[RMDB]
RNA sequence: GGGAACGACUCGAGUAGAGUCGAAAACGCUGCAAAAAGAUACGAUAUUAAGCUUCCUGAUGUGCUUACACACAAUUGCAUUGAACUUAACAUUUACAAUAAUGUUUACGAUAACUUAAGGUCAACUGGUAAGAUCAAUACUGCGCCUUUAGGAUCACGAUUUGGUAGUCUUCGGACUACCAAAUCGAAAAGAAACAACAACAACAAC
Reactivity to 2A3 in 0.01 (KOAc 150mM, MgCl2 10mM, bicine 150mM(pH8.5), 24C), signal-to-noise 1, nucleotides 027 to 156: c030g030c000u090g000c000a040a010a120a120a220g020a300u170a180c110g000a000u180a090u300u090a020a000g000c000u080u000c000c000u080g050a090u050g050u070g050c100u090u110a070c120a050c000a000c020a130a230u000u000g000c000a050u000u070g130a020a000c090u080u080a060a000c030a090u030u030u130a110c170a040a170u260a120a180u060g030u000u080u000a030c040g010a010u070a150a200c000u090u000a000a000g000g000u020c070a080a000c080u110g010g010u080a010a040g000a170u000c030a040a030u040a040c010u020g100c030g000c020c000u000u000u000a040g000g060a020u020c020a060

Conditions: 150 mM KOAc, 10 mM MgCl2 and 150 mM bicine (pH 8.5), 24 C. The record gives the reactivity of an RNA of 207 nucleotides to 2A3. For 2A3, 397 sequencing reads were counted. 2A3 adducts were read by reverse transcription with SuperScript II with manganese.